Chemical mapping of a 207-nucleotide RNA with 2A3. Values are in units of 0.01, from 0 to 300, in steps of 10. The data come from the RNA Mapping Database (RMDB), library VIROID. The reactions ran in a buffer of 150 mM KOAc, 10 mM MgCl2 and 150 mM bicine (pH 8.5), at 24 C. For 2A3, 1,414 sequencing reads were counted.
[RMDB]
RNA sequence: GGGAACGACUCGAGUAGAGUCGAAAACGGACUCCAGGUGGAGCUUCCCUGAUCUCUCACGCUCUUUUUCUUUUGCGCAGCGGCGGGUGGGUUCCCAGGGUAAAACACAAUAGGUGUUUCCCGGUAAACACCGUGCGGUUCCUGUGGUUCGCCCCGCAUCAAUCAAUCGUUUCGACGAUUGAUUGAUAAAAGAAACAACAACAACAAC
Reactivity to 2A3 in 0.01 (KOAc 150mM, MgCl2 10mM, bicine 150mM(pH8.5), 24C), signal-to-noise 2, nucleotides 027 to 156: c020g040g060a040c010u010c000c010a130g010g140u160g100g060a040g020c040u030u020c010c000c000u030g080a100u060c050u000c000u040c020a040c070g060c030u020c030u000u160u000u080u010c030u060u140u060u090g010c090g000c040a030g020c030g180g000c130g050g010g100u230g030g070g000u120u130c000c070c000a040g000g000g020u150a060a060a230a020c080a000c040a120a300u220a270g020g040u000g000u000u020u030c030c100c020g000g030u050a010a010a000c030a020c010c000g030u040g020c050g000g040u010u030c010c010u070g000u090g040g000u050u040c020g070c000c000c020c000g010c010